This 207-nucleotide RNA was probed chemically with DMS and 2A3. For 2A3 the reverse transcriptase was SuperScript II with manganese. The DMS profile rests on 1,515 reads. The 2A3 profile rests on 903 reads. It was measured as part of the RMDB library OK3TST.
RNA sequence: GGGAACGACUCGAGUAGAGUCGAAAAAUAGAUAGCCAGGCAGGCAGAUAGACACAGACAGGCAGACAGACAGACAGACAGAUGAUAGGUUGGGUUCAGUGACUCUUACCUGUAAUAACCAGCACAUUGGUAGGCUGAGGCCGGUGGAUCACUUGAGCGAAAUAGAUCACUUCGGUGAUCUAUUUCGAAAAGAAACAACAACAACAAC
Reactivity to DMS in 0.01 (KOAc 150mM, MgCl2 10mM, bicine 150mM(pH8.5), 24C), signal-to-noise 1, nucleotides 027 to 156: a080u020a130g010a240u010a060g000c020c050a090g040g040c090a040g020g000c070a000g000a120u000a080g040a070c080a100c020a100g040a120c040a040g000g000c000a090g040a030c040a070g010a150c100a180g000a140c070a060g010a160c090a120g020a090u000g020a180u000a030g040g010u010u000g020g000g000u010u010c020a040g010u000g000a080c010u000c030u000u000a040c030c010u010g000u010a080a100u000a180a060c010c010a140g010c020a110c040a190u000u000g030g000u010a130g010g000c020u010g020a020g010g040c020c080g010g030u000g020g000a110u000c020a070c000u000u000g010a130g040
Reactivity to 2A3 in 0.01 (KOAc 150mM, MgCl2 10mM, bicine 150mM(pH8.5), 24C), signal-to-noise 2, nucleotides 027 to 156: a000u130a000g080a010u010a000g000c020c010a010g020g030c000a010g040g020c000a000g000a040u050a050g040a000c020a000c000a070g080a040c000a000g010g060c010a010g000a040c020a000g040a000c030a000g070a000c020a040g090a000c040a040g060a020u070g000a050u100a040g110g020u010u010g010g010g000u040u020c030a030g040u040g070a040c020u030c030u050u180a070c000c000u000g020u000a020a070u070a110a050c020c000a010g060c000a010c020a130u060u030g060g000u130a120g100g000c060u030g010a070g030g020c020c000g060g000u030g000g020a010u000c020a060c080u110u190g070a080g120